[RMDB]
RNA sequence: GGGAACGACUCGAGUAGAGUCGAAAAAAAACUACCCGUCACAUUCGUGGUCUAGGAUGGGAAGAGUGUUAUAUUCGCUGCAUCAUAUUGCAGAAGUUUCUCACAGGAAGUCUGAACACGAUUGAACUACUGGGAGUGGAUUCGUCCACUCCCAGUAAAAAGAAACAACAACAACAAC
Reactivity to 2A3 in 0.01 (KOAc 150mM, MgCl2 10mM, bicine 150mM(pH8.5), 24C), signal-to-noise 2, nucleotides 027 to 126: a000a000a000a000c250u260a170c080c000c000g160u170c020a160c030a160u000u000c000g000u000g000g110u050c100u010a020g040g060a090u050g120g140g000a100a080g080a010g030u100g060u140u150a130u050a090u130u090c050g000c080u000g000c000a000u010c070a040u300a100u300u130g000c000a000g000a050a000g070u050u080u000c060u010c000a020c020a020g130g000a020a070g030u020c050u040g000a060a000c020a000c010g040a030u050u010g050a040a020c060
Reactivity to DMS in 0.01 (KOAc 150mM, MgCl2 10mM, bicine 150mM(pH8.5), 24C), signal-to-noise 2, nucleotides 027 to 126: a070a030a020a100c140u000a100c010c000c010g040u000c070a070c030a030u000u000c020g020u000g080g000u040c050u010a260g000g000a040u000g000g050g000a040a040g020a030g000u010g000u010u030a010u000a090u010u040c080g000c000u010g000c040a000u010c280a040u130a070u050u030g020c000a000g010a070a050g000u000u000u010c000u000c040a090c080a050g010g000a060a080g000u000c020u000g000a110a020c050a000c010g000a020u040u000g010a150a100c180